[RMDB]
RNA sequence: GGGAACGACUCGAGUAGAGUCGAAAAACGCAUAUGAGGAGGUACGCCUCCUCAUAUGCGAAUAAUUAUCGGGAACAGUGUUUCCCAUAAUUUACAUAGCCUACCACUUACGAGUGGUAGGCUAUGAGCAAUAGAUCAAGUUCGCUUGAUCUAUUGCAAAAGAAACAACAACAACAAC
Reactivity to 2A3 in 0.01 (KOAc 150mM, MgCl2 10mM, bicine 150mM(pH8.5), 24C), signal-to-noise 8, nucleotides 027 to 126: a000c000g000c000a000u000a000u000g000a000g000g000a000g030g020u060a040c250g070c010c000u010c000c010u000c000a000u000a000u000g000c000g000a000a000u000a000a000u000u010a000u030c050g000g000g020a040a020c080a260g300u070g040u300u010u000c000c000c000a000u010a000a010u000u040u050a040c010a000u000a000g000c000c000u000a000c000c000a000c010u050u050a040c240g120a010g000u000g000g000u000a000g000g000c000u000a000u000g000a000
Reactivity to DMS in 0.01 (KOAc 150mM, MgCl2 10mM, bicine 150mM(pH8.5), 24C), signal-to-noise 4, nucleotides 027 to 126: a060c000g000c000a010u000a010u000g020a010g030g000a030g030g030u010a100c290g020c010c000u000c000c000u010c000a000u000a000u000g020c000g010a010a010u000a030a000u000u010a000u000c210g020g010g000a010a000c020a290g020u000g010u020u000u000c000c000c000a010u000a010a000u000u000u020a220c010a000u000a010g000c000c000u000a010c000c000a020c010u000u010a120c210g010a020g010u000g020g010u000a000g000g010c000u000a000u000g000a140
The data come from the RNA Mapping Database (RMDB), libraries RFM100 and RFMREP. Chemical mapping of a 177-nucleotide RNA with 2A3 and DMS. DMS adducts were read by reverse transcription with MarathonRT.